[RMDB]
RNA sequence: GGGAACGACUCGAGUAGAGUCGAAAAAAAAGAUAUGGACAAUUACUGCGAAGAACUUAGGGAAAGCACGACGUCGGAAACGACGUCGUUAAGCCCUAAGGGAGCAGUGAAUUGUCCUAAGUCAAAAUCUAUGAUACACGUUCGCGUGUAUCAUAGAAAAAGAAACAACAACAACAAC
Reactivity to DMS in 0.01 (KOAc 150mM, MgCl2 10mM, bicine 150mM(pH8.5), 24C), signal-to-noise 2, nucleotides 027 to 126: a100a070a080a130g000a000u000a020u020g000g000a000c000a000a000u000u000a040c000u000g000c010g010a140a130g010a110a150c000u000u000a000g000g020g020a040a070a180g010c190a020c000g000a010c000g030u000c000g020g010a000a000a030c020g020a010c020g000u000c000g000u000u000a000a040g000c000c000c000u000a010a000g000g000g000a000g020c000a000g010u000g010a030a010u000u000g010u000c000c010u000a000a050g010u000c000a090a060a120a140
Chemical mapping of a 177-nucleotide RNA with DMS.
Source: RMDB library TTRDES, as collected in RNAgym.